[RMDB]
RNA sequence: GGGAACGACUCGAGUAGAGUCGAAAAGAAGGGUGAAAGCCCUUGAUACUGUAGUGGAAAUUAUAAAUAAGAAGAGUUCUGAGUUGCUUAAGCAGAACUAAAAUCAAAAGACAAGCAUUAUUACAAACAUGGCGAGGUAAGUUCGCUUACCUCGCAACGAACACUAGACGUUCGCGUCUAGUGUUCGAAAAGAAACAACAACAACAAC
Reactivity to 2A3 in 0.01 (KOAc 150mM, MgCl2 10mM, bicine 150mM(pH8.5), 24C), signal-to-noise 2, nucleotides 027 to 156: g090a040a000g000g000g000u060g040a060a020a030g000c030c000c000u020u010g030a050u010a090c020u020g140u130a010g030u060g010g000a000a000a090u130u060a120u140a160a060a050u300a150a030g060a090a030g010a000g090u000u000c000u020g080a090g130u100u060g120c020u070u000a070a020g020c000a000g010a010a010c050u030a050a000a000a060u100c050a010a000a010a010g090a070c010a040a000g000c000a020u000u090a010u090u170a110c030a040a070a000c010a080u160g090g000c000g000a000g000g000u000a000a040g000u000u050c070g000c160u000u000a000c010c000u000c000g000c000a000a000